The data come from the RNA Mapping Database (RMDB), library M2PK50. The record gives the reactivity of an RNA of 177 nucleotides to DMS. The RNA was probed in 150 mM KOAc, 10 mM MgCl2 and 150 mM bicine (pH 8.5) at 24 C.

[RMDB]
RNA sequence: GGGAACGACUCGAGUAGAGUCGAAAAGAACGAAACUUCGGUUUCGUUCAAAUAAUGCGUAGCUCGCGCUACGCAGGCAUCGAGUAGGUCGUGCCACCUACAAAAGAUUUUAGUUCGCUAAAAUCAAGACAUCUAAAGGCUUCGGCCUUUAGAUGUCAAAAGAAACAACAACAACAAC
Reactivity to DMS in 0.01 (KOAc 150mM, MgCl2 10mM, bicine 150mM(pH8.5), 24C), signal-to-noise 1, nucleotides 027 to 126: g000a020a010c000g030a000a000a000c000u000u010c270g040g000u000u000u000c000g000u000u000c010a040a120a080u000a080a100u010g020c010g010u000a000g000c000u000c300g040c300g000c010u000a000c000g040c000a000g000g010c160a060u010c130g000a080g000u000a070g000g040u010c090g030u000g000c070c040a140c000c000u000a010c000a150a090a090a100g000a040u000u000u000u000a040g020u010u010c210g010c000u010a000a000a040a000u000c010a100a070